[RMDB]
RNA sequence: GGGAACGACUCGAGUAGAGUCGAAAAAGGUGUGACCUGUGGGAAGUGACUAAGUCAUGAGGGGUCUUUCCUCAGGUAUGGGAUUAGCAUCCUUAUAAAAGGCCUUGAGAUGGAAUGUAGUGCCCCCAACUAGCAACCUGUUCGCAGGUUGCUAGUUAAAAGAAACAACAACAACAAC
Reactivity to DMS in 0.01 (KOAc 150mM, MgCl2 10mM, bicine 150mM(pH8.5), 24C), signal-to-noise 1, nucleotides 027 to 126: a030g010g020u000g010u000g000a030c000c010u000g010u000g010g010g010a010a040g000u020g020a170c020u020a060a150g040u010c180a080u010g010a070g000g000g000g010u000c010u010u000u000c030c030u000c010a020g000g020u000a080u000g000g000g000a060u000u000a140g000c190a160u010c000c000u040u010a070u010a070a040a090a110g010g000c030c020u030u010g000a100g000a050u010g000g010a080a100u010g010u010a090g010u010g000c000c020c010c030c120

An RNA of 177 nucleotides, treated with DMS and read out base by base.